The data come from the RNA Mapping Database (RMDB), library OK2TST.
An RNA of 177 nucleotides, treated with 2A3 and DMS and read out base by base.
RNA sequence: GGGAACGACUCGAGUAGAGUCGAAAACGUGAACUACUACAUCUUCACCAGCCUCCCCAACUCCCUCAUCCUGGGAGCCGUCUCUCUCCUUAUCGCCGUGGUGCUGGGGAUGGGUACAGGGGCGGUCAAUUACCUCGGUUUUCGAACCGAGGUAAUUAAAAGAAACAACAACAACAAC
Reactivity to 2A3 in 0.01 (KOAc 150mM, MgCl2 10mM, bicine 150mM(pH8.5), 24C), signal-to-noise 1, nucleotides 027 to 126: c010g030u050g060a030a050c030u090a030c030u100a050c170a170u020c050u050u050c010a030c050c050a040g020c030c020u030c020c000c020c000a060a010c020u000c000c000c000u010c000a120u110c020c070u050g000g030g010a010g000c030c010g000u000c010u000c000u030c000u030c010c070u040u220a070u050c050g020c230c010g090u120g200g010u140g050c070u110g000g000g000g030a030u020g010g050g000u090a060c020a030g030g060g000g010c010g000g000u070c010
Reactivity to DMS in 0.01 (KOAc 150mM, MgCl2 10mM, bicine 150mM(pH8.5), 24C), signal-to-noise 1, nucleotides 027 to 126: c260g010u000g000a050a060c090u000a070c120u030a120c110a080u000c080u000u000c020a050c020c040a160g010c030c050u000c010c010c000c050a100a180c070u000c020c000c010u000c180a090u020c110c110u000g000g010g000a070g020c030c020g000u010c010u000c010u000c100u000c020c010u000u020a050u000c000g000c030c000g010u020g010g010u010g020c070u020g000g000g000g020a030u000g010g000g000u000a090c280a060g000g000g000g000c030g000g000u010c100